Chemical mapping of a 177-nucleotide RNA with 2A3 and DMS.
The DMS profile rests on 1,996 reads.
The reactions ran in a buffer of 150 mM KOAc, 10 mM MgCl2 and 150 mM bicine (pH 8.5), at 24 C.
2A3 is a SHAPE reagent: it acylates the 2'-hydroxyl of flexible nucleotides of all four kinds.
Values cover nucleotides 27 to 126.
It was measured as part of the RMDB library OK1LIB.
RNA sequence: GGGAACGACUCGAGUAGAGUCGAAAAGUAUGUAUGGAUAACCAUACGUACAAAUAAUUGCGUCAUGGUGGUGGCUGGGGGCACCCUCAUGGUGGUGGGUGUGGAAAAUAAAGAUCCGAAAGGAUCAGCAUAGCAUGAUCUUCGGAUCAUGCUAUGCAAAAGAAACAACAACAACAAC
Reactivity to 2A3 in 0.01 (KOAc 150mM, MgCl2 10mM, bicine 150mM(pH8.5), 24C), signal-to-noise 3, nucleotides 027 to 126: g000u000a000u010g020u000a000u000g010g050a160u070a270a180c000c000a000u000a000c000g000u000a000c000a000a160a010u150a000a080u110u140g040c030g000u040c040a090u080g010g020u080g010g040u060g030g050c110u060g040g020g010g030g000c010a030c020c010c010u100c010a070u120g100g030u050g040g060u090g030g000g000u090g020u070g060g050a050a060a010a000u140a010a060a060g000a000u000c000c000g000a030a010a010g000g000a000u000c010a020
Reactivity to DMS in 0.01 (KOAc 150mM, MgCl2 10mM, bicine 150mM(pH8.5), 24C), signal-to-noise 2, nucleotides 027 to 126: g010u010a000u000g000u000a010u010g050g080a270u020a140a180c020c000a000u000a010c050g080u010a000c000a070a100a190u000a030a110u020u010g010c130g030u000c070a060u000g000g020u000g000g020u010g000g000c120u030g000g000g000g000g000c000a010c000c020c020u050c070a080u000g030g000u010g020g040u030g000g010g000u010g080u020g000g000a110a080a110a070u030a110a060a160g000a000u000c000c000g030a110a020a250g100g020a000u000c000a060